[RMDB]
RNA sequence: GGGAACGACUCGAGUAGAGUCGAAAAGGCGAGGCUAAGGAGUGAAACUCCGAAGCCGGAGGGAAACCGACAGCCCGCAGCUUAUGCGAGGGGCGGGGUGUGCUCGCCUGUAGUCCCUGCCGUACGAGCAUUAUACCGCGUUCGCGCGGUAUAAUGCAAAAGAAACAACAACAACAAC
Reactivity to DMS in 0.01 (KOAc 150mM, MgCl2 10mM, bicine 150mM(pH8.5), 24C), signal-to-noise 3, nucleotides 027 to 126: g000g020c020g010a040g020g020c000u010a040a300g000g010a020g000u010g020a200a130a300c000u010c000c010g000a150a070g010c020c000g000g000a120g000g010g000a120a100a050c030c000g000a090c020a060g010c000c000c000g000c010a100g020c010u010u000a100u030g030c110g010a050g000g000g010g030c000g000g030g000g010u000g000u000g010c040u000c010g010c020c010u000g010u020a080g010u010c000c000c000u010g000c050c100g020u030a080c120g020a190
Reactivity to 2A3 in 0.01 (KOAc 150mM, MgCl2 10mM, bicine 150mM(pH8.5), 24C), signal-to-noise 3, nucleotides 027 to 126: g000g000c020g000a020g010g020c010u030a050a040g010g020a020g050u220g120a170a120a150c000u000c000c000g000a010a000g000c030c010g000g010a000g000g070g000a130a080a020c000c000g020a010c000a010g090c000c000c000g000c010a060g040c010u150u160a070u300g110c180g090a030g000g110g000g030c020g010g040g000g000u050g000u040g020c000u010c000g000c030c000u030g040u060a070g020u050c000c000c030u020g040c000c010g100u130a080c060g020a020

Chemical mapping of a 177-nucleotide RNA with DMS and 2A3. For DMS the reverse transcriptase was MarathonRT. It was measured as part of the RMDB libraries RFM100 and RFMREP. The reactions ran in a buffer of 150 mM KOAc, 10 mM MgCl2 and 150 mM bicine (pH 8.5), at 24 C. 2A3 is a SHAPE reagent: it acylates the 2'-hydroxyl of flexible nucleotides of all four kinds.